[RMDB]
RNA sequence: GGGAACGACUCGAGUAGAGUCGAAAAGCAUUAGCUAUAGCAUCGUAUAAUCGUAUAGCUAUAAUGCAUAUUACGUACGCGCGCGAUCGCGGCUAGCAUGCUAAUAUCGCGGCUAUAAUUAGCUAGCAGAUGCUAAUGCUUUCGAGCAUUAGCAUCUAAAAGAAACAACAACAACAAC
Reactivity to DMS in 0.01 (KOAc 150mM, MgCl2 10mM, bicine 150mM(pH8.5), 24C), signal-to-noise 3, nucleotides 027 to 126: g000c000a020u010u000a030g000c010u000a040u010a040g000c110a090u010c090g000u000a130u010a110a060u020c080g010u010a020u000a020g010c000u000a100u000a080a060u010g000c020a040u010a070u000u000a060c080g000u010a200c090g020c060g010c070g010c030g010a040u000c020g000c160g020g030c060u000a080g000c120a100u010g010c080u000a060a150u000a040u010c070g000c000g010g020c120u010a060u000a070a090u010u000a070g010c010u000a080g010c080
Reactivity to 2A3 in 0.01 (KOAc 150mM, MgCl2 10mM, bicine 150mM(pH8.5), 24C), signal-to-noise 3, nucleotides 027 to 126: g000c000a010u050u000a010g000c020u040a010u030a020g110c050a090u080c060g080u200a060u140a300a170u170c060g020u050a010u020a030g000c010u030a070u060a140a040u060g010c020a010u060a120u190u110a030c090g040u040a030c060g030c030g000c000g020c030g010a020u080c030g000c000g010g020c000u020a040g030c030a070u170g000c020u050a080a050u040a030u080c030g000c000g050g000c020u020a010u030a070a160u160u070a020g020c010u030a020g010c020
Chemical mapping of a 177-nucleotide RNA with DMS and 2A3. For 2A3, 2,776 sequencing reads were counted. The reactions ran in a buffer of 150 mM KOAc, 10 mM MgCl2 and 150 mM bicine (pH 8.5), at 24 C.